[RMDB]
RNA sequence: GGGAACGACUCGAGUAGAGUCGAAAAGGUAGGUUUCCAAUUUCCUAAAAGAAUUGGUGGUGCGGAUGGGGAAUUUUUCUCCGCCUGUUUCCUAGUUCAGUCAAAACUAGGUGGCGAGCCUAGCAAAUGGUUAGGCUAAAUUCGUUUAGCCUAACCAAAAAGAAACAACAACAACAAC
Reactivity to 2A3 in 0.01 (KOAc 150mM, MgCl2 10mM, bicine 150mM(pH8.5), 24C), signal-to-noise 2, nucleotides 027 to 126: g150g110u120a010g010g060u000u040u020c010c000a010a020u000u000u000c010c060u170a070a030a070a070g050a030a030u120u030g070g000u050g010g060u140g040c010g070g030a100u060g060g020g040g080a020a040u090u040u030u070u020c010u040c000c000g030c020c000u000g040u000u000u010c000c000u010a020g000u000u010c050a080g160u080c070a020a000a000a000c000u000a000g020g030u010g030g000c040g000a030g040c000c020u060a000g000c020a030a080a140
Reactivity to DMS in 0.01 (KOAc 150mM, MgCl2 10mM, bicine 150mM(pH8.5), 24C), signal-to-noise 3, nucleotides 027 to 126: g000g000u020a060g000g010u010u000u010c010c010a080a040u010u010u010c010c000u010a080a050a070a070g040a030a030u010u010g020g020u010g030g010u020g030c050g000g000a100u030g020g000g010g020a060a040u010u010u040u030u000c000u010c010c020g010c190c000u010g000u000u000u000c000c010u020a000g000u000u000c020a010g020u050c060a030a010a030a020c000u000a010g000g020u010g010g010c050g010a080g010c000c020u010a060g010c130a110a130a100
This 177-nucleotide RNA was probed chemically with 2A3 and DMS. The RNA was probed in 150 mM KOAc, 10 mM MgCl2 and 150 mM bicine (pH 8.5) at 24 C. Source: RMDB libraries RFM100 and RFMREP, as collected in RNAgym. High 2A3 reactivity points to a flexible backbone, as in loops and unpaired stretches.